Annotation
Chemical mapping of a 170-nucleotide RNA with DMS and 2A3. For DMS, 17,683 sequencing reads were counted. For DMS the reverse transcriptase was MarathonRT. Values cover nucleotides 27 to 129. For 2A3, 15,986 sequencing reads were counted.

RNA sequence: GGGAACGACUCGAGUAGAGUCGAAAAUUGAAGGUAAAACAGCCUGUGGGUGAAACACACCCACAGGGCCCAUUGGCCGCUAGCACUCUGGUAUCACGGUACCUUUGUGCGCCUGUUUUACCGAAGGUACGCCUGAUCUUCGGAUCAGGCAAAAGAAACAACAACAACAAC
Reactivity to DMS in 0.01 (KOAc 150mM, MgCl2 10mM, bicine 150mM(pH8.5), 24C), signal-to-noise 5, nucleotides 027 to 129: u000u000g010a170a110g030g050u000a000a000a000a000c020a020g000c050c000u010g020u010g000g000g000u030g040a090a160a120c300a200c020a030c060c020c000a010c010a000g030g050g010c110c050c080a110u090u030g060g050c000c050g000c040u070a060g010c020a030c000u010c000u000g010g030u010a030u000c020a060c300g060g000u000a020c000c000u010u010u020g020u000g030c000g020c000c010u060g010u000u020u050u030a010c010c000g000a050a000g020g020u020a060c190
Reactivity to 2A3 in 0.01 (KOAc 150mM, MgCl2 10mM, bicine 150mM(pH8.5), 24C), signal-to-noise 3, nucleotides 027 to 129: u100u120g040a050a040g010g000u000a000a000a000a000c000a000g000c000c000u000g000u010g000g000g000u000g040a070a120a010c140a030c000a000c060c000c010a000c000a000g000g010g000c000c000c010a040u130u300g010g000c000c000g000c070u090a040g000c000a010c000u000c000u000g000g010u000a000u020c010a050c290g080g000u000a000c000c000u020u000u000g000u000g000c000g000c000c000u020g000u000u000u000u000a000c010c000g000a000a010g080g020u060a020c110